This 177-nucleotide RNA was probed chemically with 2A3. The reactions ran in a buffer of 150 mM KOAc, 10 mM MgCl2 and 150 mM bicine (pH 8.5), at 24 C. Values cover nucleotides 27 to 126.
RNA sequence: GGGAACGACUCGAGUAGAGUCGAAAAGGAUGAAUUCUCUCCGUGUAUGAAUGCUGCGUUGGAGAGUUCAAAUGAUACGUUACAUGUACAAGCUGGAGAGGGUGGCGACUGACGUCUGAACUUGGAAAGCCUAGGUACGCUUCGGCGUACCUAGGCUAAAAGAAACAACAACAACAAC
Reactivity to 2A3 in 0.01 (KOAc 150mM, MgCl2 10mM, bicine 150mM(pH8.5), 24C), signal-to-noise 1, nucleotides 027 to 126: g070g000a160u100g050a000a030u210u090c040u000c000u140c000c040g070u000g060u210a000u000g190a260a020u220g100c000u000g070c160g060u140u160g000g000a000g090a000g000u090u030c060a000a190a230u060g000a000u000a060c010g000u150u050a120c000a150u230g000u020a000c000a260a070g000c000u000g000g000a030g000a010g000g000g040u060g000g000c000g000a130c100u050g060a000c000g000u060c010u040g150a000a230c000u000u070g000g000a090a000